An RNA of 177 nucleotides, treated with 2A3 and DMS and read out base by base.
For 2A3 the reverse transcriptase was SuperScript II with manganese.
The RNA was probed in 150 mM KOAc, 10 mM MgCl2 and 150 mM bicine (pH 8.5) at 24 C.
Reactivities are given for positions 27 through 126.
The DMS profile rests on 4,303 reads.
RNA sequence: GGGAACGACUCGAGUAGAGUCGAAAAAGUUGUCGACGAUCUUCAACAGCACGCUCGUCGCGGCGCUGAAGGCGCUGAACGUCGAUCCCGCGAAGGCCGUGCUGAUCGACGCAUUCACGUGGCAGGAUCGCAUACCAUGAUUCGUCAUGGUAUGCGAAAAAGAAACAACAACAACAAC
Reactivity to 2A3 in 0.01 (KOAc 150mM, MgCl2 10mM, bicine 150mM(pH8.5), 24C), signal-to-noise 2, nucleotides 027 to 126: a000g200u150u110g050u060c010g010a020c010g070a090u010c020u210u090c070a080a070c000a050g000c030a010c030g010c000u040c030g090u000c000g000c000g010g040c180g000c130u080g060a110a080g050g020c020g000c090u150g100a190a050c020g000u000c010g010a020u040c000c010c010g000c010g010a010a000g050g000c050c000g030u000g070c020u010g000a020u010c010g010a000c010g000c050a030u080u110c000a030c070g040u160g070g010c050a040g050g070a050
Reactivity to DMS in 0.01 (KOAc 150mM, MgCl2 10mM, bicine 150mM(pH8.5), 24C), signal-to-noise 4, nucleotides 027 to 126: a100g020u000u000g020u000c020g020a120c090g010a080u000c050u010u000c050a140a190c070a060g020c000a000c020g010c000u000c070g000u010c030g010c020g000g040c140g000c110u010g020a100a120g010g000c040g010c120u000g010a100a250c040g010u000c000g010a150u010c010c060c000g020c010g010a040a080g000g030c300c020g020u010g000c030u000g010a030u000c030g000a050c060g010c130a050u000u000c050a070c070g010u010g010g030c050a070g000g000a160